[RMDB]
RNA sequence: GGGAACGACUCGAGUAGAGUCGAAAAUCCUAAGUCAGUAUGCUAGUAUUGGUUGGCACAUCGAUCUAAGUCGGAAACGACUUAGGGAGUGCCAUCAAUACUUGGACCAUACUGAUAUGGAAAAACCUGCUUGACUAGUUCGCUAGUCAAGCAGGAACCCAGUACCGUAGUUCGCUACGGUACUGGGAAAAGAAACAACAACAACAAC
Reactivity to 2A3 in 0.01 (KOAc 150mM, MgCl2 10mM, bicine 150mM(pH8.5), 24C), signal-to-noise 2, nucleotides 027 to 156: u030c020c000u050a170a010g030u000c000a000g000u000a000u010g040c020u020a000g030u010a010u010u010g090g130u030u220g000g020c000a010c020a270u270c040g050a030u010c030u000a000a000g000u000c010g040g000a140a090a130c000g000a000c000u000u010a000g010g010g000a060g000u000g000c020c000a000u000c000a000a000u000a000c010u000u030g000g030a070c120c000a020u000a000c000u010g000a000u010a030u060g010g010a020a000a130a010a040c000c000u000g000c000u040u000g000a000c010u000a010g030u020u130c250g040c090u000a000g000u010c010a000a020g030c000a010g000g020a000a000